This 207-nucleotide RNA was probed chemically with 2A3 and DMS. For DMS the reverse transcriptase was MarathonRT. The reactions ran in a buffer of 150 mM KOAc, 10 mM MgCl2 and 150 mM bicine (pH 8.5), at 24 C. The 2A3 profile rests on 3,125 reads. For 2A3 the reverse transcriptase was SuperScript II with manganese.
[RMDB]
RNA sequence: GGGAACGACUCGAGUAGAGUCGAAAAUUGUUUAAUCACUUAAUGUUUCCUCUAGUCCAAGUCAAGGUCCUUGUUGUACAGCACAGUGUGCAUUCAAGUCAAAGUCUGAGAAGUGUCGGGAUGAUUCAGACUGUGCAAGGGAAGGAAUAUGUAAUGAGAUAGUACUCAUGUUCGCAUGAGUACUAUCAAAAGAAACAACAACAACAAC
Reactivity to 2A3 in 0.01 (KOAc 150mM, MgCl2 10mM, bicine 150mM(pH8.5), 24C), signal-to-noise 5, nucleotides 027 to 156: u100u050g050u070u120u090a070a080u100c050a040c060u050u150a090a050u210g030u010u030u040c000c010u000c040u040a040g050u000c020c020a120a010g020u020c050a080a040g100g000u020c020c000u020u020g020u020u030g030u040a040c010a040g000c020a030c000a060g050u040g000u010g100c010a020u030u080c070a060a030g030u030c040a110a060a040g050u030c030u060g050a030g030a180a070g090u080g090u190c040g040g020g000a030u070g010a020u130u000c010a000g000a060c020u020g010u010g010c030a050a030g070g000g040a040a030g070g050a050a030u180a030u110g130u130a060a120u140g020a010
Reactivity to DMS in 0.01 (KOAc 150mM, MgCl2 10mM, bicine 150mM(pH8.5), 24C), signal-to-noise 3, nucleotides 027 to 156: u000u000g020u000u000u000a100a140u010c110a110c090u000u010a070a120u010g020u000u000u010c000c000u000c020u000a090g030u000c040c040a050a120g010u010c020a060a130g020g020u000c040c020u000u010g000u000u000g020u000a080c060a130g010c050a040c050a080g010u010g020u000g000c040a080u010u010c060a030a080g010u010c070a060a050a090g020u000c010u000g010a100g020a100a120g020u000g010u010c030g000g040g020a070u000g020a130u000u010c010a030g010a030c020u000g000u000g020c050a060a090g010g010g000a070a020g000g010a070a110u000a090u010g000u000a070a090u000g020a240